[RMDB]
RNA sequence: GGGAACGACUCGAGUAGAGUCGAAAAAUGAUUUUGUACAACCGCUUAAGCCGUAUUUAAGACAGGAUCCUGAAAAUGGACACAUCGCAGAUCGAAUUAUUGCAAUGCCAAGUCAUAUCGGUGGUGAUGUGUCUAAGUAAUUCGUUACUUAGACACAAAAAGAAACAACAACAACAAC
Reactivity to 2A3 in 0.01 (KOAc 150mM, MgCl2 10mM, bicine 150mM(pH8.5), 24C), signal-to-noise 9, nucleotides 027 to 126: a000u150g090a100u070u070u090u140g060u060a060c030a070a050c030c030g020c060u090u120a070a020g040c020c020g070u080a130u070u130u060a080a010g030a020c030a020g080g050a090u030c010c020u050g070a040a030a030a080u200g030g000a010c010a000c010a050u050c020g000c050a020g030a110u060c030g080a120a130u150u090a090u140u110g010c050a050a060u050g030c030c030a060a020g030u060c020a030u050a060u120c050g030g000u040g020g020u050g040a070
Reactivity to DMS in 0.01 (KOAc 150mM, MgCl2 10mM, bicine 150mM(pH8.5), 24C), signal-to-noise 9, nucleotides 027 to 126: a070u020g000a090u000u000u000u010g010u010a080c100a090a090c090c070g010c030u000u010a050a070g000c090c040g010u020a060u020u010u020a070a110g010a060c090a080g020g000a150u010c010c010u000g010a070a050a130a110u030g010g000a040c120a110c070a070u010c040g010c100a040g000a050u010c070g000a060a090u020u020a040u020u010g000c050a050a050u010g010c260c050a020a070g000u010c050a020u010a060u010c030g000g020u000g010g020u010g010a080